[RMDB]
RNA sequence: GGGAACGACUCGAGUAGAGUCGAAAAAAAUGACAGCCAAUGAGUUCCACAUGAAUUUGCUGUAAAUUAUUAGGACAAUGUGUCAACUCUUGGGAUCACAGGGCUCUCAGUGCAGUUGCCUUAAUUGGUCGUUCUCUAUAUUCGUAUAGAGAACGACAAAAGAAACAACAACAACAAC
Reactivity to DMS in 0.01 (KOAc 150mM, MgCl2 10mM, bicine 150mM(pH8.5), 24C), signal-to-noise 3, nucleotides 027 to 126: a050a080a110u010g010a050c090a090g020c000c020a020a030u010g000a080g020u000u000c190c000a040c050a040u000g000a150a110u000u010u010g000c060u000g010u000a060a060a100u010u010a110u000u010a090g000g010a150c170a120a010u000g020u000g000u000c080a010a010c010u010c040u000u010g000g020g000a050u010c060a070c170a090g000g000g000c130u000c030u020c010a100g000u010g030c130a070g030u010u000g000c030c020u010u010a080a080u000u010g010
Reactivity to 2A3 in 0.01 (KOAc 150mM, MgCl2 10mM, bicine 150mM(pH8.5), 24C), signal-to-noise 2, nucleotides 027 to 126: a020a000a050u130g020a040c050a030g060c030c000a060a010u090g050a010g050u040u030c050c010a030c010a050u040g080a120a090u080u120u180g050c030u060g110u250a040a070a080u300u190a060u040u150a070g100g000a030c020a070a030u060g010u010g030u080c070a010a000c000u010c000u030u000g020g000g040a030u090c040a070c040a100g000g030g020c010u000c010u020c030a070g060u030g120c010a060g020u200u130g080c010c000u090u120a100a120u140u120g040